Structure probing data (DMS and 2A3) for a 177-nucleotide construct. Source: RMDB library M2PK90, as collected in RNAgym. For DMS, 1,127 sequencing reads were counted. The 2A3 profile rests on 1,393 reads. 2A3 is a SHAPE reagent: it acylates the 2'-hydroxyl of flexible nucleotides of all four kinds.
[RMDB]
RNA sequence: GGGAACGACUCGAGUAGAGUCGAAAAACAUAGUUUGGCCGACGUCAUAGCAUUGAAGACGAAUCGUUAAAGACACCAGCUCGUCUUAUAGGAGCCCAUUUAGCAAAAACAGUCCUGUAGGAACCAAGUACGUCUCACAAUUCGUUGUGAGACGUACAAAAGAAACAACAACAACAAC
Reactivity to DMS in 0.01 (KOAc 150mM, MgCl2 10mM, bicine 150mM(pH8.5), 24C), signal-to-noise 2, nucleotides 027 to 126: a080c080a080u000a100g020u000u000u000g020g000c050c000g010a100c040g000u000c040a070u000a140g010c010a070u000u000g010a090a050g000a040c030g000a040a080u000c090g020u000u000a020a040a090g010a050c060a060c060c060a070g020c090u010c050g000u000c010u000u000a060u000a020g010g000a030g020c020c060c030a080u000u000u000a130g000c100a020a010a040a050a060c110a120g000u000c040c010u000g010u000a040g000g000a110a040c050c100a040a110
Reactivity to 2A3 in 0.01 (KOAc 150mM, MgCl2 10mM, bicine 150mM(pH8.5), 24C), signal-to-noise 2, nucleotides 027 to 126: a000c040a060u180a040g030u060u010u100g060g010c040c020g010a040c020g030u020c020a040u070a080g000c040a080u040u140g100a160a030g010a020c000g050a060a060u050c030g020u030u080a100a100a030g040a010c010a040c030c030a040g010c040u040c030g100u000c060u040u050a060u030a060g050g000a020g030c000c020c000a000u080u070u070a040g020c000a000a080a020a050a020c020a010g100u020c010c010u030g000u040a010g060g060a030a000c000c000a080a020